RNA sequence: GGGAACGACUCGAGUAGAGUCGAAAAUGCAUGAACAGUGCAAUACCUUCGUUACGCUGCGCGAUGAUGCGGUCGAUAGCCACAGACGGAAUAACAUCUGUCGUGCCGGCAGUAUUCAGGUCAGCAGAAGAGUAGUGUUCUUCGGAACACUACUCUUAAAAGAAACAACAACAACAAC
Reactivity to DMS in 0.01 (KOAc 150mM, MgCl2 10mM, bicine 150mM(pH8.5), 24C), signal-to-noise 2, nucleotides 027 to 126: u010g000c020a020u000g000a100a110c230a170g000u000g010c000a040a080u010a150c000c000u000u000c080g010u000u000a140c140g020c010u010g000c030g030c050g020a050u010g010a040u000g000c010g010g050u010c010g000a130u020a100g020c110c040a020c030a130g030a000c020g010g010a050a010u000a090a160c200a150u000c000u000g000u010c020g000u000g000c040c000g000g010c000a000g010u000a010u000u010c100a060g000g000u000c020a060g030c050a120g010
Reactivity to 2A3 in 0.01 (KOAc 150mM, MgCl2 10mM, bicine 150mM(pH8.5), 24C), signal-to-noise 2, nucleotides 027 to 126: u000g020c000a020u060g040a210a000c040a200g030u010g000c010a000a040u110a100c030c000u060u050c050g070u070u080a060c110g000c010u020g000c040g000c010g120a140u100g030a000u010g050c030g020g000u000c010g000a060u100a070g020c050c000a010c030a060g010a000c010g000g030a040a010u030a070a010c020a100u000c000u020g010u000c020g000u000g020c000c010g010g000c000a000g000u020a070u060u110c000a000g020g100u100c010a010g000c000a000g050